[RMDB]
RNA sequence: GGGAACGACUCGAGUAGAGUCGAAAACUAUUAGUCUUAAAAUCAGCAAGCUACAUUAGGUUGCAGUCAGGUCAGCCUAAAAGAGAUUUACUGACUCGCAAGAUUUGGGCUUGAGUUAUGUGUCGAGGUCUUGUUAAACCAAUACAUAACCUAUGGUGCUCAAUACAAACUUCGGUUUGUAUUGAGCAAAAGAAACAACAACAACAAC
Reactivity to 2A3 in 0.01 (KOAc 150mM, MgCl2 10mM, bicine 150mM(pH8.5), 24C), signal-to-noise 3, nucleotides 027 to 156: c010u020a090u250u130a050g060u040c020u010u170a110a110a070a120u190c040a030g030c070a070a010g010c020u090a080c130a110u050u040a040g040g000u010u020g010c020a020g070u020c020a020g030g020u030c020a010g000c010c000u060a030a030a050a000g140a000g020a010u200u230u170a090c010u030g000a000c000u000c050g010c010a010a000g020a070u030u020u010g000g000g000c000u010u020g020a020g060u000u010a010u010g010u000g010u010c050g060a040g010g010u000c020u070u090g000u030u080a050a050a030c050c010a010a010u070a030c010a000u010a000a010c000c000u070a160u180g130g000u070
This 207-nucleotide RNA was probed chemically with 2A3. For 2A3 the reverse transcriptase was SuperScript II with manganese. The RNA was probed in 150 mM KOAc, 10 mM MgCl2 and 150 mM bicine (pH 8.5) at 24 C. The data come from the RNA Mapping Database (RMDB), library ARCHII.